The data come from the RNA Mapping Database (RMDB), libraries RFM100 and RFMREP. Structure probing data (DMS and 2A3) for a 177-nucleotide construct. Values cover nucleotides 27 to 126. Values are in units of 0.01, from 0 to 300, in steps of 10. For 2A3 the reverse transcriptase was SuperScript II with manganese. The reactions ran in a buffer of 150 mM KOAc, 10 mM MgCl2 and 150 mM bicine (pH 8.5), at 24 C.
RNA sequence: GGGAACGACUCGAGUAGAGUCGAAAACAAGCAUAUCCUACCUUGGAAACGGAUUAUCCGGCGAUAAGGAGGAUGCCUUGGCAAAGCACUUUACUUUUUGAAGUGUCCUGCGCGCCCACGACAGCCCUGUCUCAUCUCCUUUCGAGGAGAUGAGACAAAAAGAAACAACAACAACAAC
Reactivity to DMS in 0.01 (KOAc 150mM, MgCl2 10mM, bicine 150mM(pH8.5), 24C), signal-to-noise 3, nucleotides 027 to 126: c040a010a020g010c160a090u020a130u020c000c010u000a070c000c000u000u000g000g000a150a150a010c020g000g000a300u010u030a110u030c010c000g010g010c000g010a300u100a000a000g000g000a050g000g000a000u000g000c190c000u030u000g000g000c100a030a140a190g000c070a000c030u000u030u000a080c300u000u020u050u020u010g000a010a000g010u000g000u010c070c110u010g010c080g030c100g000c030c000c000a080c040g000a070c070a060g000c040c050c050
Reactivity to 2A3 in 0.01 (KOAc 150mM, MgCl2 10mM, bicine 150mM(pH8.5), 24C), signal-to-noise 4, nucleotides 027 to 126: c010a020a010g010c020a060u060a060u220c000c020u080a300c010c010u010u000g010g010a050a050a020c030g010g030a050u110u110a100u240c020c020g070g000c060g090a020u010a040a000g000g000a000g000g000a010u000g000c010c010u000u010g060g050c060a080a050a040g040c010a010c000u000u030u050a020c000u080u110u120u110u230g060a040a010g000u010g030u070c010c010u010g000c010g010c020g000c000c000c000a020c040g030a000c030a010g030c000c040c000